[RMDB]
RNA sequence: GGGAACGACUCGAGUAGAGUCGAAAAACAUAGUUUGGCCGACGUCAUACCAUUGAAGACGAAUCGUUAAAGACACCAGCUCGUCUAAUAGGAGCCCAUUUAGCAAAAACAGUCCUGUAGGAACCAAAACCACUCUCUCAUUCGUGAGAGAGUGGUUAAAAGAAACAACAACAACAAC
Reactivity to DMS in 0.01 (KOAc 150mM, MgCl2 10mM, bicine 150mM(pH8.5), 24C), signal-to-noise 1, nucleotides 027 to 126: a090c090a070u000a080g020u020u000u030g020g010c030c050g070a150c140g050u000c050a050u000a110c080c030a050u000u010g000a100a110g020a040c000g000a030a090u000c010g010u000u010a030a040a190g000a080c100a050c030c030a020g030c060u000c030g000u000c010u000a020a070u000a090g010g000a090g010c030c010c110a070u000u020u010a010g010c060a020a020a020a060a120c160a020g000u000c040c070u020g000u000a120g020g040a010a080c040c060a030a030
Structure probing data (DMS) for a 177-nucleotide construct. DMS adducts were read by reverse transcription with MarathonRT.